[RMDB]
RNA sequence: GGGAACGACUCGAGUAGAGUCGAAAAUACAACGGAGCAAAAGUGUGAAAAGUCCUCAAGCGGAAAACACACAGAGAGGACAUGACGGCAGCUCCGAUUAUAAAAUAUAACACAGAAUAAAAUUGAAGUUAGACUAGUUAUUCGUAACUAGUCUAACAAAAGAAACAACAACAACAAC
Reactivity to 2A3 in 0.01 (KOAc 150mM, MgCl2 10mM, bicine 150mM(pH8.5), 24C), signal-to-noise 2, nucleotides 027 to 126: u050a020c030a050a030c010g010g000a020g000c000a070a040a120a030g040u050g000u070g080a100a100a090a060g000u000c010c020u010c010a030a050g110c120g060g010a070a080a070a090c070a010c050a020c020a040g070a000g010a000g090g010a020c010a010u070g120a010c040g020g030c060a020g000c050u000c000c020g000a000u010u000a010u000a000a060a030a010u270a010u060a150a020c010a010c010a060g190a210a060u120a160a080a050a050u140u120g020a110a000
Reactivity to DMS in 0.01 (KOAc 150mM, MgCl2 10mM, bicine 150mM(pH8.5), 24C), signal-to-noise 2, nucleotides 027 to 126: u010a060c140a130a160c000g000g000a020g010c010a080a090a230a170g040u000g040u000g000a060a100a200a120g010u000c000c000u000c010a090a300g010c100g000g000a060a060a080a170c150a140c030a060c030a170g000a300g020a000g010g000a010c010a000u010g020a050c050g000g030c100a050g010c010u010c000c000g000a040u010u000a020u000a020a040a090a090u000a030u000a060a070c060a090c130a080g000a030a060u010a040a050a110a030u010u030g000a100a080